[RMDB]
Structure probing data (DMS and 2A3) for a 177-nucleotide construct. It was measured as part of the RMDB library OK2TST. The DMS profile rests on 20,671 reads.
RNA sequence: GGGAACGACUCGAGUAGAGUCGAAAAGAACGCCGCGGUGUCGAGCGUCUCACCGCGGGCGGUCGGGUCGAUGCCCGCCGCGACCAGCCUGCGCUCGGAUUCCGCGGGCGAACCCGCCCAGCCGGAACAGGAUAGUGAUAUUCGUAUCACUAUCCUGAAAAGAAACAACAACAACAAC
Reactivity to DMS in 0.01 (KOAc 150mM, MgCl2 10mM, bicine 150mM(pH8.5), 24C), signal-to-noise 9, nucleotides 027 to 126: g000a110a170c140g020c010c000g020c010g010g020u000g010u000c030g000a030g010c020g010u000c110u000c040a030c060c040g020c020g010g000g010c000g010g010u010c040g020g010g020u000c200g010a180u020g010c010c010c010g010c010c010g000c000g000a100c060c040a160g000c080c100u000g000c010g010c010u000c020g010g000a220u000u000c010c000g020c020g000g010g010c010g000a040a090c120c110c030g010c010c010c010a100g020c100c040g010g000a080a140
Reactivity to 2A3 in 0.01 (KOAc 150mM, MgCl2 10mM, bicine 150mM(pH8.5), 24C), signal-to-noise 6, nucleotides 027 to 126: g050a080a020c060g010c060c000g000c010g020g010u030g040u090c040g010a010g010c010g080u050c050u060c060a050c000c040g000c030g000g010g010c010g000g040u250c090g000g010g010u080c210g160a110u300g030c000c000c000g000c000c000g030c010g020a040c010c010a030g090c000c040u050g000c010g010c010u010c000g000g030a050u060u000c000c000g000c000g010g000g000c010g000a080a110c080c040c010g000c020c010c000a030g100c130c010g010g010a020a040